[RMDB]
RNA sequence: GGGAACGACUCGAGUAGAGUCGAAAACAACGGCUGUGACGGAGUCUGCAGCGAAGCAAGCACGUCCAGCUUCACAUUGGGCAAUGGUGCAGACCUGCCCAGCAGAGCUGCCGCGGCCGAGGGGGCGUAGACUUCUUCCUUUCGAGGAAGAAGUCUAAAAAGAAACAACAACAACAAC
Reactivity to DMS in 0.01 (KOAc 150mM, MgCl2 10mM, bicine 150mM(pH8.5), 24C), signal-to-noise 3, nucleotides 027 to 126: c070a120a250c060g010g000c000u000g030u000g020a040c010g000g010a060g010u000c000u000g000c000a150g040c050g030a020a040g000c020a090a110g000c050a140c130g000u000c030c090a130g000c010u000u000c040a040c070a150u020u000g010g010g020c010a060a060u000g020g010u000g010c290a080g010a040c010c010u000g000c000c000c010a070g020c000a020g010a030g010c010u010g010c010c030g010c020g020g000c000c010g000a080g010g010g010g000g000c300g000
Reactivity to 2A3 in 0.01 (KOAc 150mM, MgCl2 10mM, bicine 150mM(pH8.5), 24C), signal-to-noise 1, nucleotides 027 to 126: c010a000a070c030g020g000c020u030g030u080g050a020c000g060g000a050g270u020c010u000g020c010a020g070c010g040a030a000g010c060a050a040g090c060a030c140g080u030c050c020a000g000c000u000u010c010a020c010a090u070u120g000g000g000c030a060a180u170g010g010u160g030c090a020g140a210c010c000u000g020c000c000c000a000g000c000a000g000a010g010c000u020g030c000c000g010c000g000g010c020c010g020a090g040g020g000g010g010c070g000

The record gives the reactivity of an RNA of 177 nucleotides to DMS and 2A3. DMS adducts were read by reverse transcription with MarathonRT. Source: RMDB library OK2TRN, as collected in RNAgym. Conditions: 150 mM KOAc, 10 mM MgCl2 and 150 mM bicine (pH 8.5), 24 C. Values cover nucleotides 27 to 126.